[RMDB]
RNA sequence: GGGAACGACUCGAGUAGAGUCGAAAAACGAUAACGAGGCGCUCGCUAUUGCUGCGUAACUGACGGCCUGACGGUCUGACGUUACAAAGCUAAAGCGCGGUUGGACCCCACCGGGCAACGGAAGGGGAAAGGCGACCCCGUUUCGACGGGGUCGCAAGAUCAGAACUAGAUUCGUCUAGUUCUGAUCAAAAGAAACAACAACAACAAC
Reactivity to 2A3 in 0.01 (KOAc 150mM, MgCl2 10mM, bicine 150mM(pH8.5), 24C), signal-to-noise 3, nucleotides 027 to 156: a020c060g050a090u150a140a040c080g020a050g100g000c030g020c020u090c040g080c180u150a110u220u210g010c020u010g000c010g000u000a000a010c020u030g020a000c010g010g030c000c020u170g180a080c150g000g000u010c010u020g000a000c010g000u000u000a000c030a000a030a000g000c000u000a010a030a000g000c000g020c000g000g000u020u040g040g030a020c000c030c010c000a010c020c000g050g070g080c150a210a080c030g030g030a080a120g040g000g000g020a020a050a040g080g000c010g000a000c000c000c000c010g020u060u050u090c140g010a040c020g000g020g000g020u010c000g010c000a010a000
Reactivity to DMS in 0.01 (KOAc 150mM, MgCl2 10mM, bicine 150mM(pH8.5), 24C), signal-to-noise 1, nucleotides 027 to 156: a100c010g000a150u000a050a060c040g010a150g000g040c010g060c030u000c000g060c060u000a140u010u000g000c020u000g030c300g040u000a030a060c000u000g010a300c300g000g010c000c070u010g000a250c220g030g010u000c010u010g010a300c300g000u010u000a050c020a080a300a080g000c050u000a010a150a080g000c000g020c050g000g000u000u000g010g040a050c040c000c000c000a300c040c060g060g020g050c070a040a070c060g030g030a300a080g050g010g010g020a010a000a100g020g010c050g040a250c000c000c000c030g040u020u000u010c110g010a090c030g000g050g010g000u010c000g070c000a040a000